[RMDB]
The record gives the reactivity of an RNA of 177 nucleotides to 2A3 and DMS. For 2A3 the reverse transcriptase was SuperScript II with manganese. For 2A3, 1,287 sequencing reads were counted. For DMS the reverse transcriptase was MarathonRT. Values cover nucleotides 27 to 126. In probing experiments dimethyl sulfate is read out at A N1 and C N3, which are open when not base-paired. Source: RMDB library OK2TST, as collected in RNAgym.

RNA sequence: GGGAACGACUCGAGUAGAGUCGAAAACAGGUUUAUUACAUAAGUAAAUGUGUGCCAUGGUGAUUUGCUGCAUAGAUCAUGAAAAUAUGGAACGCAUCAUGGAUUUGUGUGUCAUCCUUGUGCAGGGAUUAUUGUCAACCUUCGGGUUGACAAUAAUAAAAGAAACAACAACAACAAC
Reactivity to 2A3 in 0.01 (KOAc 150mM, MgCl2 10mM, bicine 150mM(pH8.5), 24C), signal-to-noise 2, nucleotides 027 to 126: c020a020g000g030u040u110u070a100u170u200a100c040a110u240a130a130g130u090a080a060a100u100g000u000g000u040g020c030c000a000u040g050g000u020g040a110u050u050u170g010c000u000g000c000a020u070a050g020a010u070c020a020u090g130a140a090a010a030u270a060u000g010g020a070a020c030g010c050a000u030c040a030u090g040g070a080u040u050u010g060u010g040u030g020u010c010a030u000c040c040u070u090g060u030g020c000a000g040g030g000
Reactivity to DMS in 0.01 (KOAc 150mM, MgCl2 10mM, bicine 150mM(pH8.5), 24C), signal-to-noise 4, nucleotides 027 to 126: c040a070g010g000u000u000u000a040u010u010a050c070a090u010a070a080g000u010a050a110a020u000g020u000g000u000g000c010c010a030u000g010g010u000g010a040u000u000u010g020c040u010g010c040a040u010a050g010a040u010c030a070u000g000a090a060a040a120u000a030u000g000g000a050a050c040g000c040a020u010c080a070u010g010g000a100u000u010u000g020u000g010u000g000u010c130a080u000c020c010u000u000g020u000g020c040a050g000g000g010